[RMDB]
RNA sequence: GGGAACGACUCGAGUAGAGUCGAAAAACGUGCGAAAGCACGGUCAGCUCGUGAGGAUAUACAACACUGCUUCGUCAGUGUAUUAAGAUCACAUGAGGAUCACCCAUGUAGAAGGCACGAGCUGAUAGAGCAUGAGGGAGUUCGCUCCCUCAUGCUCAAAAGAAACAACAACAACAAC
Reactivity to DMS in 0.01 (KOAc 150mM, MgCl2 10mM, bicine 150mM(pH8.5), 24C), signal-to-noise 2, nucleotides 027 to 126: a040c040g050u000g000c000g020a130a130a180g050c000a010c020g030g020u020c000a000g000c010u000c000g060u000g000a050g010g000a120u000a120u000a060c120a100a110c000a010c000u010g030c000u010u010c270g010u010c000a000g020u000g000u000a060u000u000a150a130g000a060u000c020a040c050a100u000g010a120g030g010a040u040c150a200c060c010c020a100u000g000u000a040g030a210a230g000g000c010a000c010g000a020g010c000u000g000a000u000a010
Reactivity to 2A3 in 0.01 (KOAc 150mM, MgCl2 10mM, bicine 150mM(pH8.5), 24C), signal-to-noise 1, nucleotides 027 to 126: a000c020g000u010g000c020g060a090a000a030g010c000a000c000g000g000u010c010a000g010c000u010c000g010u000g000a040g050g040a080u020a000u030a090c000a000a000c000a000c000u000g030c010u150u160c070g240u280c000a000g000u000g050u030a030u010u090a020a020g000a030u040c000a000c040a180u240g060a250g100g010a040u010c020a140c040c070c000a020u080g000u000a050g020a130a040g090g000c010a010c000g000a000g020c000u000g000a000u010a020